[RMDB]
RNA sequence: GGGAACGACUCGAGUAGAGUCGAAAAGCGACAUUCCACGUCGUCGGUGCCGCAGCUAACGCAUUAAGUUCCCCGCCUGGGGAGUACGGCAGCAAGGCUAAAACUCAAAGGAAUUGACGGGGGCCAGAGUUAUAUUAAAAUUCGUUUUAAUAUAACUAAAAGAAACAACAACAACAAC
Reactivity to DMS in 0.01 (KOAc 150mM, MgCl2 10mM, bicine 150mM(pH8.5), 24C), signal-to-noise 7, nucleotides 027 to 126: g010c040g000a040c050a130u020u040c060c060a130c100g010u010c040g020u010c070g000g010u010g010c030c030g000c090a140g010c010u010a070a110c110g000c080a090u020u030a100a170g010u020u010c000c000c000c070g010c090c080u040g000g000g030g000a040g010u010a050c180g010g000c050a040g020c100a090a120g000g000c040u000a040a080a090a080c070u010c050a080a100a110g010g000a100a080u030u010g000a090c050g010g000g000g000g010c070c070a100g000
Reactivity to 2A3 in 0.01 (KOAc 150mM, MgCl2 10mM, bicine 150mM(pH8.5), 24C), signal-to-noise 7, nucleotides 027 to 126: g050c020g020a010c020a050u150u100c040c010a060c060g040u030c000g020u020c040g020g050u060g040c020c020g000c030a030g010c030u070a080a040c060g010c030a050u170u100a140a040g050u050u050c000c000c000c000g070c030c070u170g000g010g040g000a010g010u040a030c030g040g000c000a020g040c050a060a040g110g000c000u040a040a060a030a060c040u050c040a070a070a020g090g030a070a110u100u160g050a070c020g020g010g000g000g000c020c010a060g010